RNA sequence: GGGAACGACUCGAGUAGAGUCGAAAAACGGUGCGGAAGUUCGCGCUUCCGUGAAACGCGAAAAUCGGACGGUGGCUGCAAGUCGCAUCGCAAAAUCGCGGCAAGUGGAGUUAGCGAGAGGAGGCUGAAACCAUCCAACACUUCGGUGUUGGAUGAAGCAUGUUAAAUGUUUCGACAUUUAACAUGCAAAAGAAACAACAACAACAAC
Reactivity to 2A3 in 0.01 (KOAc 150mM, MgCl2 10mM, bicine 150mM(pH8.5), 24C), signal-to-noise 7, nucleotides 027 to 156: a000c050g020g000u060g000c000g010g020a040a020g050u090u140c050g030c020g010c050u020u020c000c000g020u020g020a120a080a010c070g020c040g050a060a030a010a110u170c050g020g020a010c030g010g040u010g040g020c050u100g020c080a070a050g020u020c020g010c030a040u060c030g000c050a070a090a000a030u090c050g000c010g020g010c050a070a050g040u070g070g020a060g020u090u100a040g050c050g040a020g000a020g050g010a010g010g020c030u030g030a080a010a000c040c000a000u000c000c000a000a000c000a000c000u050u090c230g070g000u000g000u000u000g000g000a000u000g000a000a000
Reactivity to DMS in 0.01 (KOAc 150mM, MgCl2 10mM, bicine 150mM(pH8.5), 24C), signal-to-noise 2, nucleotides 027 to 156: a050c020g000g030u000g010c000g030g010a050a110g000u000u000c170g030c270g010c020u000u000c000c050g020u000g010a050a060a060c030g000c010g010a070a040a080a110u000c050g020g010a100c020g020g000u000g020g010c030u000g000c080a060a130g020u000c030g000c000a110u010c050g040c070a050a070a060a080u000c090g020c040g020g020c060a070a150g030u000g010g000a070g000u000u000a090g030c040g010a050g000a090g010g010a060g030g020c060u000g000a090a090a090c060c000a010u000c010c000a010a010c000a000c000u000u010c240g050g020u000g000u000u010g000g000a020u000g010a030a180

This 207-nucleotide RNA was probed chemically with 2A3 and DMS. The reactions ran in a buffer of 150 mM KOAc, 10 mM MgCl2 and 150 mM bicine (pH 8.5), at 24 C. DMS adducts were read by reverse transcription with MarathonRT. The 2A3 profile rests on 7,256 reads. Values cover nucleotides 27 to 156.